[RMDB]
RNA sequence: GGGAACGACUCGAGUAGAGUCGAAAAGAAGUCAGAUUUAUCAUGGGUGGGACAUUUUUUUCCAUUUCAUUACCCACCAGGAAAGAAAUGCAGGCCUUCUGCAAAGUGCUGCUUGUGUAGAGUUUGCUUUUUUUCAUCCAUCUCAUCCAACCAUUCAUAUACUACUAGUAUUCGUACUAGUAGUAUAAAAAGAAACAACAACAACAAC
Reactivity to DMS in 0.01 (KOAc 150mM, MgCl2 10mM, bicine 150mM(pH8.5), 24C), signal-to-noise 3, nucleotides 027 to 156: g010a040a070g020u000c040a080g000a170u010u010u010a070u020c040a110u000g010g020g060u000g010g010g010a090c040a010u000u000u000u000u050u000u000c040c010a110u010u000u000c040a090u010u000a180c030c020c010a110c070c060a150g010g000a040a030a070g010a030a040a040u000g010c040a080g010g020c090c020u000u000c010u000g020c030a070a050a080g030u010g020c030u000g020c030u000u010g020u010g020u000a150g020a090g010u000u000u000g000c010u000u010u010u000u000u020u010c030a120u000c020c020a060u000c030u010c020a070u000c030c020a040a110c060c020a130u010u000c050a240
Reactivity to 2A3 in 0.01 (KOAc 150mM, MgCl2 10mM, bicine 150mM(pH8.5), 24C), signal-to-noise 7, nucleotides 027 to 156: g060a040a010g050u100c050a030g000a120u090u140u130a100u200c070a060u100g050g000g000u010g010g030g030a030c030a070u060u050u040u030u060u080u090c050c040a080u100u120u140c060a080u060u160a130c010c000c010a020c020c010a000g020g030a020a030a010g020a010a040a010u120g000c010a000g010g030c010c040u090u050c010u030g000c020a050a040a020g020u060g100c070u050g020c000u100u050g070u010g010u150a020g010a010g080u020u040u020g000c000u030u020u030u010u030u030u050c030a050u040c040c000a070u020c040u050c050a080u060c040c020a020a070c030c010a030u090u180c060a010